[RMDB]
RNA sequence: GGGAACGACUCGAGUAGAGUCGAAAAGCAGAGUCGCAACCCGUCACAGUUUGGGUACAGGCGCUCAAAGGCCGCUUCCACCCGGGCGAAACUCCCCGGUCCAAAAAUGGCGCUCGAGGUCAGAACUGCCCUGGAGAGGUCCUCUAGGGCCGGCCAGGCCAUAGGCAGUAUUCGUACUGCCUAUGGCAAAAGAAACAACAACAACAAC
Reactivity to DMS in 0.01 (KOAc 150mM, MgCl2 10mM, bicine 150mM(pH8.5), 24C), signal-to-noise 1, nucleotides 027 to 156: g000c050a130g020a060g000u010c020g080c030a220a110c020c000c010g000u000c110a150c060a170g010u000u000u000g010g020g070u000a110c050a110g010g030c040g040c040u010c070a040a050a140g030g020c000c020g000c070u000u000c020c030a130c030c010c030g020g160g040c040g000a080a090a070c020u010c010c010c000c020g060g040u000c050c040a010a030a070a070a110u000g000g010c030g060c030u000c000g020a060g040g000u010c110a190g020a030a080c120u000g040c040c000c020u000g000g010a050g020a170g020g020u010c040c020u020c020u000a090g000g020g000c010c040g000g000c000c030a130g030
Reactivity to 2A3 in 0.01 (KOAc 150mM, MgCl2 10mM, bicine 150mM(pH8.5), 24C), signal-to-noise 2, nucleotides 027 to 156: g060c030a040g000a030g070u200c010g020c020a040a020c010c040c000g120u120c080a140c050a200g070u150u170u150g030g010g010u080a060c040a090g200g010c000g000c020u020c000a050a100a000g000g000c010c010g000c080u110u000c000c000a010c000c010c000g000g000g000c030g060a040a040a040c010u080c030c000c000c030g030g000u030c000c010a060a200a140a010a160u100g030g000c010g010c000u010c010g080a140g030g010u060c030a040g000a190a110c050u060g000c010c000c000u010g020g010a000g000a030g060g090u100c020c010u010c010u000a010g000g000g000c010c000g000g020c020c000a050g030